An RNA of 177 nucleotides, treated with DMS and read out base by base.
For DMS, 821 sequencing reads were counted.
Conditions: 150 mM KOAc, 10 mM MgCl2 and 150 mM bicine (pH 8.5), 24 C.
RNA sequence: GGGAACGACUCGAGUAGAGUCGAAAAACAACAGGGAACUGCUUUCAGGUCUUAAGCACUCUGGACAUUUGCUCUGUUAGCAUGUCUCAAAUUUGACCACCAAAAUGCUUCCAAAGCAGAAAAGAGACAGUGUCGUAAUCUUCGGAUUACGACACUGAAAAGAAACAACAACAACAAC
Reactivity to DMS in 0.01 (KOAc 150mM, MgCl2 10mM, bicine 150mM(pH8.5), 24C), signal-to-noise 2, nucleotides 027 to 126: a030c080a100a060c090a020g020g000g010a090a130c140u000g000c070u010u000u010c150a070g020g020u000c050u020u020a040a060g060c180a090c010u010c050u000g000g000a070c030a060u000u000u010g000c000u010c010u010g010u000u010a080g050c010a050u000g000u000c010u000c060a160a030a190u010u030u010g000a090c060c060a140c110c130a050a020a030a030u000g020c000u010u010c180c160a090a050a020g030c010a040g000a030a060a060a110g000a070g000a120